[RMDB]
RNA sequence: GGGAACGACUCGAGUAGAGUCGAAAAGGGGCCCCCCCAUAAGAUGGCGAGAAAUCCACUCAUGGGUCCAUCGUCCAUCUCCUUCUUACCUUUUGGCCGGCAUGGUCCCAGCCUCCUCGCUGGCGCCUCACUGCAAAGUUCGCUUUGCAGAAAAGAAACAACAACAACAAC
Reactivity to 2A3 in 0.01 (KOAc 150mM, MgCl2 10mM, bicine 150mM(pH8.5), 24C), signal-to-noise 9, nucleotides 027 to 129: g020g000g010g000c010c000c000c000c000c000c000a040u060a080a030g020a010u020g000g010c010g000a020g010a030a040a010u010c000c000a050c110u260c120a270u200g010g000g000u000c010c010a050u010c000g140u070c020c000a010u010c020u070c010c010u130u140c020u100u130a200c040c010u130u130u080u120g080g000c010c000g010g010c040a070u120g040g000u040c020c000c000a020g020c000c000u050c000c000u040c060g010c000u010g020g010c010g020c010c010u040c030a090
Reactivity to DMS in 0.01 (KOAc 150mM, MgCl2 10mM, bicine 150mM(pH8.5), 24C), signal-to-noise 8, nucleotides 027 to 129: g030g020g000g030c040c010c040c000c000c000c040a090u080a020a060g020a060u030g000g020c030g030a000g020a150a190a000u020c000c010a090c230u100c140a120u000g000g000g000u020c080c030a210u000c020g030u000c020c050a010u010c040u010c050c020u040u040c070u040u070a120c120c090u050u040u030u040g010g010c000c000g000g070c050a060u000g030g000u030c030c010c000a100g040c020c040u050c030c040u030c070g000c000u000g030g030c090g000c060c000u050c110a170
Conditions: 150 mM KOAc, 10 mM MgCl2 and 150 mM bicine (pH 8.5), 24 C. Chemical mapping of a 170-nucleotide RNA with 2A3 and DMS. It was measured as part of the RMDB library 15KLIB. Values cover nucleotides 27 to 129. For DMS, 48,201 sequencing reads were counted. Values are in units of 0.01, from 0 to 300, in steps of 10. For 2A3 the reverse transcriptase was SuperScript II with manganese.